[RMDB]
RNA sequence: GGGAACGACUCGAGUAGAGUCGAAAAGAUCGUGAGCUGGGUUUAGACCGUCGUGAGACAGGUCGGUUGCUAUCUAACGGGGGUGUCAGGGCGGCUGAGGGGAAGGAGGCUCUAGUACGAGAGGAACGUUGCAAACAAUGUUCGCAUUGUUUGCAACAAAAGAAACAACAACAACAAC
Reactivity to 2A3 in 0.01 (KOAc 150mM, MgCl2 10mM, bicine 150mM(pH8.5), 24C), signal-to-noise 1, nucleotides 027 to 126: g000a010u080c000g020u050g070a010g040c000u040g010g090g060u000u030u220a020g000a020c010c020g000u000c010g060u070g150a060g020a050c060a100g050g020u010c010g030g020u090u030g000c000u040a100u170c030u070a020a040c030g000g010g050g000g000u070g140u140c100a070g010g040g050c030g010g000c040u060g010a010g040g010g010g000a000a050g060g010a040g000g050c000u020c000u000a020g030u040a040c080g040a020g000a010g060g050a020a110c090